RNA sequence: GGGAACGACUCGAGUAGAGUCGAAAAGAACUACAGGUGUGAGCCACUGUGCCUGGCUUAUUCACUUUUUGUUAUUUUUUAUUUUUUGAGACAGUCUUGCUCUGUCACCCAGGCUAGAGUGCAGUGGCAUGAUCUCGGCUCACUGCAACCUCCACUAGCUACUACCGUGAUUCGUCACGGUAGUAGCAAAAGAAACAACAACAACAAC
Reactivity to 2A3 in 0.01 (KOAc 150mM, MgCl2 10mM, bicine 150mM(pH8.5), 24C), signal-to-noise 2, nucleotides 027 to 156: g040a010a020c060u170a080c040a020g020g040u030g020u030g080a000g000c030c010a020c020u040g020u040g040c000c010u000g010g080c020u110u040a070u150u060c030a020c050u000u150u130u180u090g010u070u050a150u160u080u040u110u010u050a120u100u120u020u000u140u230g060a090g000a030c010a000g040u090c000u120u070g020c070u000c010u100g020u010c070a130c030c040c010a000g010g050c010u070a050g010a010g160u030g000c000a010g010u000g000g000c010a040u040g050a040u150c070u020c050g070g000c030u040c000a050c000u010g020c010a010a010c000c010u000c020c010a080c150u180a000
Chemical mapping of a 207-nucleotide RNA with 2A3. It was measured as part of the RMDB library OK3TST.